This 177-nucleotide RNA was probed chemically with DMS and 2A3. It was measured as part of the RMDB library OK2TST. The reactions ran in a buffer of 150 mM KOAc, 10 mM MgCl2 and 150 mM bicine (pH 8.5), at 24 C. For DMS the reverse transcriptase was MarathonRT. 2A3 adducts were read by reverse transcription with SuperScript II with manganese.

[RMDB]
RNA sequence: GGGAACGACUCGAGUAGAGUCGAAAAUUAGCGCCAGUUCCCAAGCGGUGAUGGCCAACCUGCAGCGGGCCCGGACCGAGCGGGUGAACACGGAGUCGGCGGCGCGGCUAGCCAAGCAGAAGGCUGAGGUAAUAGGGACAUUCGUGUCCCUAUUACCAAAAGAAACAACAACAACAAC
Reactivity to DMS in 0.01 (KOAc 150mM, MgCl2 10mM, bicine 150mM(pH8.5), 24C), signal-to-noise 4, nucleotides 027 to 126: u010u010a110g020c030g020c020c040a190g020u000u010c020c000c000a160a190g020c050g000g010u010g020a170u010g000g000c030c050a130a120c090c030u010g000c030a130g030c050g030g010g030c010c080c140g000g000a090c000c020g000a110g010c030g020g000g030u000g010a080a070c070a110c060g000g000a200g000u010c030g000g020c070g000g000c010g020c050g000g030c050u000a050g000c000c050a100a130g020c100a200g010a150a170g010g000c010u000g010a180
Reactivity to 2A3 in 0.01 (KOAc 150mM, MgCl2 10mM, bicine 150mM(pH8.5), 24C), signal-to-noise 1, nucleotides 027 to 126: u040u020a020g060c000g010c040c010a040g040u050u010c000c010c020a030a000g090c010g050g000u080g060a110u080g030g030c000c010a020a060c000c000u010g010c030a110g080c020g060g020g040c030c110c050g060g070a040c020c020g000a020g050c000g030g030g050u070g080a050a030c090a030c150g020g020a050g040u020c050g010g050c010g000g040c000g000c000g030g000c000u000a000g000c000c000a050a030g000c070a020g010a170a030g060g050c000u040g030a020